[RMDB]
RNA sequence: GGGAACGACUCGAGUAGAGUCGAAAAGGGGUCUAAAGCUAGAUCCCAGUAGGCUUUUGACGCUCUGAAGCCUCCACGGAGCGAUAAGCCUACGGGAUCUUGGACCUUUAGACGGAGGCACCCAAAAUCGUAUCGAGCCUUCGGGCUCGAUACGAAAGGUCUUAGUUAGGUUCGCCUAACUAAGACCAAAAGAAACAACAACAACAAC
Reactivity to 2A3 in 0.01 (KOAc 150mM, MgCl2 10mM, bicine 150mM(pH8.5), 24C), signal-to-noise 1, nucleotides 027 to 156: g040g000g020g010u040c010u030a090a060a000g080c030u030a030g010a000u000c020c000c040a000g000u000a010g000g010c000u020u060u230u300g120a050c020g010c000u000c000u020g050a160a020g010c020c010u000c010c000a040c010g020g020a000g000c000g040a070u090a180a030g010c010c000u000a000c000g000g020g000a000u030c020u070u140g030g020a030c010c000u000u010u000a010g010a010c040g000g000a000g010g000c010a030c010c000c050a040a020a000a120u060c010g000u010a000u010c000g000a010g010c010c060u110u140c220g010g000g070c050u000c000g000a000u000a000c000g000a010a000a000
The data come from the RNA Mapping Database (RMDB), library RNAMAK. Structure probing data (2A3) for a 207-nucleotide construct. For 2A3 the reverse transcriptase was SuperScript II with manganese. The reactions ran in a buffer of 150 mM KOAc, 10 mM MgCl2 and 150 mM bicine (pH 8.5), at 24 C.